The record gives the reactivity of an RNA of 207 nucleotides to 2A3.
[RMDB]
RNA sequence: GGGAACGACUCGAGUAGAGUCGAAAAGAAAUUACGUUUCCUUUACACUUCUCAAACCGGGAUCAAGAGAGGCAAAGCAUCCCUCAUAUCCACGAUGGAGGGUGUCGUGGAGUAUACUGUACCAAAAAGAGCGAACACGGCUUCGGCCGUGUUCGAACCUAGGUUGACAGUUCGCUGUCAACCUAGGAAAAGAAACAACAACAACAAC
Reactivity to 2A3 in 0.01 (KOAc 150mM, MgCl2 10mM, bicine 150mM(pH8.5), 24C), signal-to-noise 3, nucleotides 027 to 156: g030a010a080a010u220u090a030c070g000u030u050u030c010c010u030u040u050a050c050a030c040u220u150c060u060c030a090a160a080c060c020g070g000g000a060u060c100a220a020g010a020g030a050g020g000c040a170a080a000g010c010a100u090c000c040c000u030c020a080u130a060u040c010c000a010c030g000a010u070g060g060a060g010g050g020u050g000u010c010g000u010g000g010a010g010u000a010u020a000c110u100g070u070a070c060c090a050a090a050a030a000g090a040g090c010g010a000a000c000a010c030g030g000c010u030u070c120g030g000c000c000g020u000g000u000u010c000g000a000a000
Reactivities are given for positions 27 through 156.